Chemical mapping of a 207-nucleotide RNA with 2A3 and DMS. For 2A3 the reverse transcriptase was SuperScript II with manganese. Conditions: 150 mM KOAc, 10 mM MgCl2 and 150 mM bicine (pH 8.5), 24 C. For DMS, 2,618 sequencing reads were counted.
RNA sequence: GGGAACGACUCGAGUAGAGUCGAAAAGCGUACUACUAACUUUUGACGUAGUAUGGAUGGAGUAGGGUCCCAAAUAGGACCCUACCUUGAAGUCCAUAAACUACGAUAAGUUAGUAUCGCAAAGAUAGAAGAGGAGCUUCGGCUCCUCUUCUAUCAACGUUGAAUCAUACUUCGGUAUGAUUCAACGAAAAGAAACAACAACAACAAC
Reactivity to 2A3 in 0.01 (KOAc 150mM, MgCl2 10mM, bicine 150mM(pH8.5), 24C), signal-to-noise 3, nucleotides 027 to 156: g010c010g040u100a070c050u000a000c000u010a000a000c000u010u070u060u280g200a090c020g000u010a000g010u010a000u000g000g000a010u020g000g060a070g020u000a000g010g000g020u010c040c020c030a200a250a130u300a090g000g000a000c010c000c020u000a000c000c000u000u100g060a040a000g000u000c000c000a010u040a040a190a050c000u000a000c010g050a070u000a070a000g000u000u000a000g020u010a000u020c000g020c020a010a040a000g000a000u000a000g000a010a000g020a010g030g000a000g000c020u070u090c270g040g000c010u010c010c000u000c000u000u000c000u000a000u000c000a000a000
Reactivity to DMS in 0.01 (KOAc 150mM, MgCl2 10mM, bicine 150mM(pH8.5), 24C), signal-to-noise 1, nucleotides 027 to 156: g010c010g020u000a030c110u000a000c000u000a000a010c030u010u010u010u000g000a270c120g010u000a000g030u000a020u000g000g010a040u000g000g000a050g010u000a000g000g030g000u010c000c030c060a010a200a300u010a120g020g010a000c000c000c020u000a010c000c030u000u010g000a190a300g020u000c000c010a030u000a040a040a240c000u000a010c000g000a080u000a000a010g000u030u000a000g000u000a010u010c000g050c000a050a080a150g000a000u000a000g000a000a020g010a030g010g000a030g010c010u000u000c300g040g020c000u020c010c000u000c000u000u000c000u010a010u000c000a030a050